An RNA of 177 nucleotides, treated with 2A3 and DMS and read out base by base. 2A3 is a SHAPE reagent: it acylates the 2'-hydroxyl of flexible nucleotides of all four kinds. Conditions: 150 mM KOAc, 10 mM MgCl2 and 150 mM bicine (pH 8.5), 24 C. The 2A3 profile rests on 37,515 reads. 2A3 adducts were read by reverse transcription with SuperScript II with manganese.

[RMDB]
RNA sequence: GGGAACGACUCGAGUAGAGUCGAAAAGAUAUGGACACACCCAGGCGAGGAUCUAUGGAUCGGAAACGAUCCUGUAGGGAGCCUGGUGUGUCCUAAGUCAAAAGUACCAUCCUUCGGGAUGGUACAACCUAUGACUAAGGUUCGCCUUAGUCAUAGGAAAAGAAACAACAACAACAAC
Reactivity to 2A3 in 0.01 (KOAc 150mM, MgCl2 10mM, bicine 150mM(pH8.5), 24C), signal-to-noise 5, nucleotides 027 to 126: g010a000u010a000u040g000g000a010c010a000c010a000c030c300c120a030g000g010c010g050a300g050g000a010u000c000u010a030u110g000g000a000u010c010g000g000a000a010a000c000g000a000u010c020c010u010g010u070a000g010g000g020a010g000c000c010u000g010g000u000g000u000g000u000c000c000u000a000a000g000u000c000a000a010a050a160g000u000a000c000c000a010u010c010c010u050u120c300g190g010g000a000u000g010g000u000a000c000a000a000
Reactivity to DMS in 0.01 (KOAc 150mM, MgCl2 10mM, bicine 150mM(pH8.5), 24C), signal-to-noise 6, nucleotides 027 to 126: g010a010u000a010u010g000g010a020c000a000c000a010c300c250c270a020g010g020c010g000a090g000g000a010u010c000u000a030u010g010g010a010u000c010g020g010a010a000a010c000g010a010u000c000c000u010g020u000a000g000g000g000a010g020c000c000u000g000g000u010g010u010g000u000c000c000u000a000a050g000u000c000a090a070a130a150g000u000a000c010c000a010u000c000c010u000u010c280g020g000g010a000u000g000g010u000a000c000a040a110